[RMDB]
RNA sequence: GGGAACGACUCGAGUAGAGUCGAAAAAUCUGGGGGAUGGCUUGGCUUGAGUUGCCUAUGAAGGUCGUGGUAAGCUGCGAUAAGCUUGGGCGAGGAGCAUACAUCUUUGGAACCCAAGAUUGCCUAAGUUACCUAUACUGUUCGCAGUAUAGGUAACAAAAGAAACAACAACAACAAC
Reactivity to DMS in 0.01 (KOAc 150mM, MgCl2 10mM, bicine 150mM(pH8.5), 24C), signal-to-noise 5, nucleotides 027 to 126: a040u000c020u000g010g000g000g010g010a080u010g000g010c120u000u000g020g020c020u000u000g010a190g020u000u010g000c020c000u000a070u010g000a100a070g020g010u000c020g020u000g010g010u010a100a110g030c020u000g030c040g010a040u000a080a090g010c020u000u000g010g000g020c010g000a160g000g010a040g010c060a090u010a150c080a040u000c010u000u000u000g020g010a140a240c010c000c000a030a060g000a050u000u000g010c030c020u000a070a100
Reactivity to 2A3 in 0.01 (KOAc 150mM, MgCl2 10mM, bicine 150mM(pH8.5), 24C), signal-to-noise 5, nucleotides 027 to 126: a000u020c020u020g010g000g000g000g010a010u030g060g070c070u060u080g080g000c010u030u030g060a090g110u160u050g030c000c010u070a090u090g080a060a030g050g010u010c010g000u030g000g020u060a100a050g080c010u000g000c010g030a030u010a090a020g030c010u020u040g000g000g000c020g000a060g050g020a010g060c010a020u070a060c010a030u030c000u070u100u120g130g020a050a030c000c000c010a030a030g010a030u040u050g000c010c010u030a130a020